[RMDB]
The data come from the RNA Mapping Database (RMDB), libraries RFM100 and RFMREP. Chemical mapping of a 177-nucleotide RNA with DMS and 2A3.
RNA sequence: GGGAACGACUCGAGUAGAGUCGAAAAGUUCUGGUGGACCAUAAUCAGACGCACGGUAUACUUCGUUUCUGUUGGAGAAUAUUGGGAGUCUUUUAAUGUGAUGAGUGGCCAACAUAACCUUAUAGUCUACACUAUGCAAAUUCGUUUGCAUAGUGUAAAAAGAAACAACAACAACAAC
Reactivity to DMS in 0.01 (KOAc 150mM, MgCl2 10mM, bicine 150mM(pH8.5), 24C), signal-to-noise 9, nucleotides 027 to 126: g010u000u000c050u000g010g020u000g010g010a120c030c030a030u000a100a030u000c040a070g010a040c020g010c070a080c020g000g000u000a030u000a070c020u000u000c020g010u010u020u020c190u020g020u020u020g010g010a030g000a140a030u010a020u000u000g010g000g010a200g010u000c010u010u010u010u020a070a140u020g020u020g010a040u000g000a130g020u000g000g010c010c010a030a030c040a030u000a030a050c030c030u010u010a090u010a120g010u010c080
Reactivity to 2A3 in 0.01 (KOAc 150mM, MgCl2 10mM, bicine 150mM(pH8.5), 24C), signal-to-noise 9, nucleotides 027 to 126: g010u020u030c020u030g020g010u030g010g090a280c010c000a020u050a050a030u050c030a010g010a020c010g010c020a030c010g010g000u030a020u020a080c010u010u020c010g180u100u160u120c170u230g260u190u160g020g010a010g010a060a030u030a040u050u030g040g010g030a050g020u000c000u010u180u050u100a190a150u210g060u080g050a050u020g010a020g110u020g010g000c010c000a010a000c010a020u060a010a020c010c010u110u160a100u090a130g070u020c030

As a SHAPE reagent, 2A3 marks flexible, mostly unpaired nucleotides at the ribose 2'-OH. In probing experiments dimethyl sulfate is read out at A N1 and C N3, which are open when not base-paired. Conditions: 150 mM KOAc, 10 mM MgCl2 and 150 mM bicine (pH 8.5), 24 C.